[RMDB]
Source information: Chemical mapping of a 177-nucleotide RNA with DMS and 2A3. Conditions: 150 mM KOAc, 10 mM MgCl2 and 150 mM bicine (pH 8.5), 24 C. DMS (dimethyl sulfate) methylates the pairing face of unpaired adenines and cytosines. For DMS the reverse transcriptase was MarathonRT. 2A3 adducts were read by reverse transcription with SuperScript II with manganese. Values cover nucleotides 27 to 126.
RNA sequence: GGGAACGACUCGAGUAGAGUCGAAAAGAGGUCAUGAAGAUCAUGCCCGUGCAGAAGCAGACCCGUGCUGGACAAAGAACGCGCUUCAAGGCGUUCGUUGUGGUGGGUGACCACAAUGGACACGUGGCACCCUUGCUCAAUUCGUUGAGCAAGGGUGAAAAGAAACAACAACAACAAC
Reactivity to DMS in 0.01 (KOAc 150mM, MgCl2 10mM, bicine 150mM(pH8.5), 24C), signal-to-noise 4, nucleotides 027 to 126: g010a110g000g010u000c020a120u010g010a160a170g010a090u000c030a090u000g020c000c010c020g010u000g020c080a070g010a120a090g000c010a090g010a120c000c020c020g030u000g000c020u000g000g010a030c110a050a100a080g000a030a010c030g010c010g010c110u010u010c220a110a120g010g010c020g010u000u000c010g010u000u000g010u000g000g020u000g010g000g010u000g010a190c010c000a000c010a010a040u010g020g000a100c050a050c060g000u010g010g010
Reactivity to 2A3 in 0.01 (KOAc 150mM, MgCl2 10mM, bicine 150mM(pH8.5), 24C), signal-to-noise 2, nucleotides 027 to 126: g130a030g030g020u020c030a060u150g120a130a080g030a130u080c020a060u060g030c010c020c010g020u050g010c050a080g010a300a030g020c010a000g010a050c010c010c000g020u030g000c030u060g020g070a020c040a040a120a030g030a040a020c010g040c020g000c070u170u140c100a000a050g100g000c020g000u000u000c000g000u010u000g020u010g000g040u020g040g110g150u160g070a020c010c010a000c000a000a040u020g030g000a020c020a000c070g010u180g030g020